An RNA of 207 nucleotides, treated with DMS and 2A3 and read out base by base.
It was measured as part of the RMDB library OK3TST.
[RMDB]
RNA sequence: GGGAACGACUCGAGUAGAGUCGAAAAUAUGAUUGGUUGCUUACUAUCAAUGAUGAAACUACACAAAUUAAAGGCAUCGAUGAAACCGUUGCAAGCAAACUAAUGUGGUUGGAUCGUGGCGUAUUGUUUAAAGAUCUCUACCGUGGCGAUCGUGAUCCUAAGAUGUUCUGUUCGCAGAACAUCUUAGAAAAGAAACAACAACAACAAC
Reactivity to DMS in 0.01 (KOAc 150mM, MgCl2 10mM, bicine 150mM(pH8.5), 24C), signal-to-noise 3, nucleotides 027 to 156: u010a080u000g010a110u000u000g010g010u000u000g020c040u000u000a110c030u000a150u000c050a110a110u010g030a080u030g010a160a100a070c030u000a100c070a130c070a060a010a100u000u010a070a060a070g000g010c050a050u010c030g010a110u000g000a110a080a200c050c030g010u000u000g000c030a050a150g020c050a070a050a060c060u000a060a070u010g010u010g010g020u000u000g000g010a040u000c010g020u010g010g020c030g040u010a070u000u000g020u000u000u010a080a110a140g000a050u000c020u000c040u000a070c050c110g010u010g010g030c030g010a040u010c050g030u000g000a090u000c040
Reactivity to 2A3 in 0.01 (KOAc 150mM, MgCl2 10mM, bicine 150mM(pH8.5), 24C), signal-to-noise 6, nucleotides 027 to 156: u220a060u080g080a070u040u060g020g050u030u030g020c050u080u050a040c040u070a080u120c060a100a060u180g020a050u060g040a100a110a040c080u230a050c070a010c060a090a150a110u140u170a170a130a040g080g000c000a010u020c050g090a080u130g050a120a030a020c060c020g010u010u030g020c040a050a000g020c020a030a060a110c030u070a130a070u150g040u070g040g080u030u050g030g000a030u030c010g020u030g080g000c000g010u030a020u050u080g090u020u100u090a100a120a050g060a070u060c010u010c010u060a020c040c050g020u050g090g000c030g010a010u020c040g010u040g030a030u040c010
The RNA was probed in 150 mM KOAc, 10 mM MgCl2 and 150 mM bicine (pH 8.5) at 24 C. For 2A3, 3,023 sequencing reads were counted. For 2A3 the reverse transcriptase was SuperScript II with manganese.